[RMDB]
RNA sequence: GGGAACGACUCGAGUAGAGUCGAAAACUUGUUUGCGAAAGAAUAUCUGAAGAAAUACGGUCAUUUCCCCAGGAUAAGAGAGGGGAGCUUCACUCUUUUAGAGACAAAAAUAUUGGAUAACGAUUCCGGGAGGUAUACCAUUCGUGGUAUACCUCCCAAAAGAAACAACAACAACAAC
Reactivity to DMS in 0.01 (KOAc 150mM, MgCl2 10mM, bicine 150mM(pH8.5), 24C), signal-to-noise 1, nucleotides 027 to 126: c020u000u000g000u000u000u000g000c070g030a080a000a020g000a110a030u040a020u000c190u000g000a100a050g040a040a040a040u160a000c200g000g000u000c150a110u000u000u000c000c000c000c170a090g030g000a220u160a000a060g010a040g000a170g000g000g000g000a050g010c170u000u000c010a080c070u050c000u000u000u000u000a110g010a030g040a090c010a060a060a070a000a020u000a050u010u000g000g000a090u020a040a040c160g000a140u020u090c110c070
Reactivity to 2A3 in 0.01 (KOAc 150mM, MgCl2 10mM, bicine 150mM(pH8.5), 24C), signal-to-noise 3, nucleotides 027 to 126: c030u010u040g080u020u070u100g270c080g080a110a070a030g100a050a040u120a080u190c020u090g050a090a000g080a030a280a000u150a050c080g040g120u110c100a150u060u090u050c010c000c050c030a050g160g000a130u140a300a040g080a010g000a060g070g000g000g000a010g000c000u050u050c020a040c010u070c000u000u080u030u040a080g000a020g000a040c040a000a130a010a150a000u170a150u130u230g010g010a010u070a140a060c050g110a150u160u130c090c030